[RMDB]
RNA sequence: GGGAACGACUCGAGUAGAGUCGAAAAAGGGCUGGAUUCGUCCAGCCCUGCACAUUCGUACGCAACGAAGCGUACGUCAUUACGCAAAUGACGUUAAGCGUAGAACCACGGACUUCGGUCCGUGGAAGAACCUCUCAACGUUCGCGUUGAGAGGUUCAAAAGAAACAACAACAACAAC
Reactivity to DMS in 0.01 (KOAc 150mM, MgCl2 10mM, bicine 150mM(pH8.5), 24C), signal-to-noise 2, nucleotides 027 to 126: a010g020g010g020c000u010g040g020a020u000u010c210g030u000c000c010a010g000c060c010c000u020g040c080a090c170a170u010u000c060g000u000a050c010g020c030a130a080c240g000a130a110g010c010g010u030a000c000g030u020c080a040u000u000a030c130g020c130a070a100a030u000g010a030c050g000u000u000a040a170g040c050g010u000a090g000a060a120c020c000a000c020g030g000a000c000u000u000c170g000g010u000c000c000g000u000g000g010a010a020
Reactivity to 2A3 in 0.01 (KOAc 150mM, MgCl2 10mM, bicine 150mM(pH8.5), 24C), signal-to-noise 2, nucleotides 027 to 126: a030g000g000g000c000u000g010g000a020u000u080c150g010u000c050c000a010g010c000c000c000u010g000c000a020c000a090u110u100c020g010u030a000c010g000c030a160a090c170g190a200a110g020c000g010u030a010c000g010u000c000a030u020u140a030c070g000c050a000a130a160u200g070a070c100g030u110u110a030a110g000c020g000u030a040g030a090a050c000c000a000c000g000g000a000c000u030u070c170g030g000u000c000c000g000u000g010g000a000a000

Description:
Structure probing data (DMS and 2A3) for a 177-nucleotide construct. The 2A3 profile rests on 2,378 reads.